[RMDB]
RNA sequence: GGGAACGACUCGAGUAGAGUCGAAAAUCGGCAGCUUUCAGCAGACGCUGACGGUGAGUGCCCCCACCCGCCUACUCAUUCCGGCAGCGAAAGUGCAGCCCGGCGCCCUCAGCGUGCAGAGCAGCGCGCCACAAUAGUGGUUCGCCACUAUUGUGGCAAAAGAAACAACAACAACAAC
Reactivity to 2A3 in 0.01 (KOAc 150mM, MgCl2 10mM, bicine 150mM(pH8.5), 24C), signal-to-noise 1, nucleotides 027 to 126: u100c040g040g020c030a020g010c010u070u120u110c070a090g000c050a040g050a180c070g010c000u000g000a020c020g020g020u070g040a110g050u100g020c060c050c000c010c000a080c030c020c020g030c000c020u070a050c030u020c060a050u170u030c000c000g020g050c010a030g010c030g090a180a040a010g060u080g040c010a040g000c030c000c000g060g000c000g050c050c010c000u010c000a030g000c010g040u060g020c000a000g030a010g080c000a000g030c020g000c020
Reactivity to DMS in 0.01 (KOAc 150mM, MgCl2 10mM, bicine 150mM(pH8.5), 24C), signal-to-noise 2, nucleotides 027 to 126: u000c040g000g020c040a140g010c030u010u010u000c070a160g000c050a100g020a190c170g010c000u000g020a020c060g010g000u000g010a080g010u000g030c040c020c060c090c030a110c030c070c030g000c040c030u000a050c020u010c010a130u000u000c050c030g010g020c040a040g020c000g010a040a100a090g020u010g010c100a080g010c010c010c020g040g000c130g000c010c020c030u010c080a100g010c040g000u000g010c060a090g000a080g000c050a100g000c020g010c090